[RMDB]
RNA sequence: GGGAACGACUCGAGUAGAGUCGAAAAUUUGAAAAAUCCUUCUGACCAAUAUAUGAGGAACAUUGUAAGAGGCAAGUGUAGAAGUCAAGAUCUAUUGAGAAGGCGUUGCAGGGGUCCAGGUGAGAAUGAGGAUGGUUCAGAGUGGAGAGACAGGGAAGUGCAUUAAUGAUUUCGAUCAUUAAUGCACAAAAGAAACAACAACAACAAC
Reactivity to DMS in 0.01 (KOAc 150mM, MgCl2 10mM, bicine 150mM(pH8.5), 24C), signal-to-noise 2, nucleotides 027 to 156: u010u000u010g000a030a060a080a140a050u000c000c020u010u000c070u010g010a160c060c010a090a130u000a080u020a110u000g000a090g020g010a050a100c070a090u000u010g000u010a090a070g020a070g020g030c050a050a120g020u000g020u000a030g010a050a060g020u020c020a050a090g000a090u000c050u010a110u000u020g000a150g000a080a130g030g010c120g000u000u000g000c020a090g000g040g020g030u000c000c040a030g070g030u000g000a060g020a070a060u010g100a090g040g000a040u000g020g000u010u000c030a100g030a100g000u000g000g040a060g010a130g030a060c070a090g000g000g000a080a210
Reactivity to 2A3 in 0.01 (KOAc 150mM, MgCl2 10mM, bicine 150mM(pH8.5), 24C), signal-to-noise 3, nucleotides 027 to 156: u050u030u040g030a030a040a030a000a050u050c020c000u070u000c030u030g050a070c030c020a100a040u110a030u040a040u190g050a050g020g030a030a040c020a080u070u130g040u090a070a070g030a030g030g000c040a070a060g030u050g020u120a010g030a080a000g020u010c030a040a000g000a030u000c020u040a110u090u150g020a050g030a060a040g030g000c030g060u060u100g000c020a010g010g000g010g010u000c000c020a010g000g010u020g040a030g020a000a030u100g000a030g060g000a050u060g010g010u040u020c020a020g010a020g060u030g000g030a040g020a000g000a020c020a040g100g020g060a100a070
Chemical mapping of a 207-nucleotide RNA with DMS and 2A3.
The reactions ran in a buffer of 150 mM KOAc, 10 mM MgCl2 and 150 mM bicine (pH 8.5), at 24 C.
The 2A3 profile rests on 1,862 reads.
For DMS, 2,896 sequencing reads were counted.